[RMDB]
RNA sequence: GGGAACGACUCGAGUAGAGUCGAAAACGAAAGGAGGCUCCCGUGUCCGGUGAGGGUACGGUGGUCAUCCCGCAACCGGCAGGCGACGAGCCGGUGAUUAAAAACACGUUCUUUUUUCCCGAUAUCGACCCGAAGCGCGUCCGGGAACGUAUGCGCCGAAUAAUCUGGCAUUCGUGCCAGAUUAUUCAAAAGAAACAACAACAACAAC
Reactivity to 2A3 in 0.01 (KOAc 150mM, MgCl2 10mM, bicine 150mM(pH8.5), 24C), signal-to-noise 3, nucleotides 027 to 156: c010g060a070a010a010g010g000a010g000g010c000u020c050c000c010g010u020g020u010c010c010g030g290u300g110a120g030g000g000u010a010c000g020g010u020g000g010u020c000a150u030c000c000c000g060c030a030a000c000c000g010g000c000a020g040g050c030g010a090c020g040a040g010c000c000g000g000u000g000a030u070u230a040a100a030a020a000c050a030c080g010u100u060c110u030u160u030u000u050u000c000c000c000g020a070u060a030u200c050g050a070c000c010c050g040a190a040g010c010g000c000g010u000c010c010g000g080g030a080a000c020g050u100a010u030g000c010g000c050c050
Reactivity to DMS in 0.01 (KOAc 150mM, MgCl2 10mM, bicine 150mM(pH8.5), 24C), signal-to-noise 1, nucleotides 027 to 156: c050g000a120a130a040g010g000a140g020g000c010u000c300c000c000g000u010g020u000c010c020g020g040u000g000a300g020g000g030u000a000c000g000g000u000g000g020u020c050a220u000c030c010c000g020c180a150a050c000c010g020g000c000a090g010g020c050g000a180c080g000a150g030c030c000g030g000u020g000a030u000u020a030a030a110a130a060c070a140c040g000u010u010c020u000u010u000u010u000u000c010c020c000g030a110u040a090u000c030g000a300c000c020c020g020a090a090g000c110g000c020g000u000c030c010g000g020g000a060a090c060g030u000a060u000g010c030g090c000c100
Overview
Structure probing data (2A3 and DMS) for a 207-nucleotide construct. For DMS the reverse transcriptase was MarathonRT. High DMS reactivity at an A or C suggests that its Watson-Crick edge is free.